[RMDB]
RNA sequence: GGGAACGACUCGAGUAGAGUCGAAAAAGACAGAAGGAUUCUAUACAAACUUGAAAUGUCUUUUGACUUUAUAUUUGAAAAUGUGUGUGCAUGUGCAUUCAUGAAGUGGAGAGAAAUGAUAAAUGCUGGAGAAAAUGUCUUUCGAGACAUUUUCUCCAAAAGAAACAACAACAACAAC
Reactivity to 2A3 in 0.01 (KOAc 150mM, MgCl2 10mM, bicine 150mM(pH8.5), 24C), signal-to-noise 2, nucleotides 027 to 126: a010g010a000c000a000g140a030a020g000g000a150u210u000c020u110a040u080a090c040a190a160a030c000u050u070g130a060a090a110u020g010u010c000u000u070u000u210g000a000c000u020u300u290a130u030a270u210u190u190g160a140a090a090a090u140g020u000g000u000g000u080g080c030a010u020g020u070g120c050a000u050u100c010a010u070g200a080a030g030u020g000g130a030g010a000g000a000a200a000u150g020a040u130a040a070a050u160g000c010u010